Structure probing data (2A3 and DMS) for a 177-nucleotide construct. The reactions ran in a buffer of 150 mM KOAc, 10 mM MgCl2 and 150 mM bicine (pH 8.5), at 24 C. 2A3 adducts were read by reverse transcription with SuperScript II with manganese.
[RMDB]
RNA sequence: GGGAACGACUCGAGUAGAGUCGAAAAGUGUCAGCCCGACGGCCUGGAUCAGCUCCUCGUGUAGUUCGAACCACACGGUGUGGUAGGAGUCGAUGAGUGGGCGCGUCAGCCAGGCGAUGUCGCCCGCCACGCACCACCUUUUCGAAGGUGGUGCGUGAAAAGAAACAACAACAACAAC
Reactivity to 2A3 in 0.01 (KOAc 150mM, MgCl2 10mM, bicine 150mM(pH8.5), 24C), signal-to-noise 2, nucleotides 027 to 126: g180u160g050u050c050a010g110c000c020c000g000a000c010g040g020c000c000u000g000g020a060u080c030a030g050c010u030c010c030u080c020g000u060g000u030a110g020u010u180c090g050a040a030c030c010a010c010a000c080g160g050u170g040u060g060g020u050a120g070g040a040g020u030c050g050a130u120g020a030g030u030g000g000g000c000g000c000g020u020c000a000g100c010c000a010g010g050c000g000a030u010g060u110c010g020c020c000c000g000c020
Reactivity to DMS in 0.01 (KOAc 150mM, MgCl2 10mM, bicine 150mM(pH8.5), 24C), signal-to-noise 2, nucleotides 027 to 126: g010u010g010u000c100a130g010c030c010c010g020a060c040g010g010c010c010u010g000g010a070u010c040a200g010c040u000c020c010u000c040g010u000g000u000a040g000u000u010c230g030a180a150c040c010a030c020a060c070g020g010u010g010u030g000g000u010a120g010g000a070g000u000c020g000a140u010g000a120g010u010g010g010g000c000g020c050g000u010c040a100g000c020c020a030g010g010c050g000a020u020g010u000c020g000c000c000c030g030c050